Description
The data come from the RNA Mapping Database (RMDB), library OK2TST. This 177-nucleotide RNA was probed chemically with DMS and 2A3.
RNA sequence: GGGAACGACUCGAGUAGAGUCGAAAACGCAAUCACUUUAUCUGAUUUUCGAUCCGCGCAAGGAUAGCUCGCCGCAAGCUGAGGCUGUCCACGGUUUCGACAACUGGAUGACACGCUAUCAGGAUCAAUGCCAGUAUGCUUUCGAGCAUACUGGCAUAAAAGAAACAACAACAACAAC
Reactivity to DMS in 0.01 (KOAc 150mM, MgCl2 10mM, bicine 150mM(pH8.5), 24C), signal-to-noise 2, nucleotides 027 to 126: c050g030c210a110a100u000c070a050c140u000u000u010a030u020c030u010g010a080u000u000u000u000c040g000a050u000c000c020g000c140g000c210a000a140g000g000a020u000a010g000c000u000c040g010c060c080g000c260a080a300g020c020u010g020a040g030g030c000u010g000u000c000c070a170c020g000g000u000u000u000c030g000a030c140a080a030c020u000g030g020a050u000g000a040c110a020c070g010c030u000a010u000c050a060g030g010a040u020c110a150
Reactivity to 2A3 in 0.01 (KOAc 150mM, MgCl2 10mM, bicine 150mM(pH8.5), 24C), signal-to-noise 2, nucleotides 027 to 126: c040g010c010a010a080u050c010a040c140u110u170u180a110u070c070u070g080a130u010u010u110u090c010g020a010u000c000c020g160c000g050c190a160a080g020g000a010u000a020g000c000u010c020g000c000c010g070c110a060a040g030c070u120g040a010g140g000c010u020g000u030c000c000a030c020g030g070u070u070u040c040g010a010c020a030a010c020u020g040g030a040u080g010a030c000a020c060g010c020u020a040u210c010a090g000g000a020u090c110a090
Annotation: 2A3 adducts were read by reverse transcription with SuperScript II with manganese. For 2A3, 1,565 sequencing reads were counted. Conditions: 150 mM KOAc, 10 mM MgCl2 and 150 mM bicine (pH 8.5), 24 C.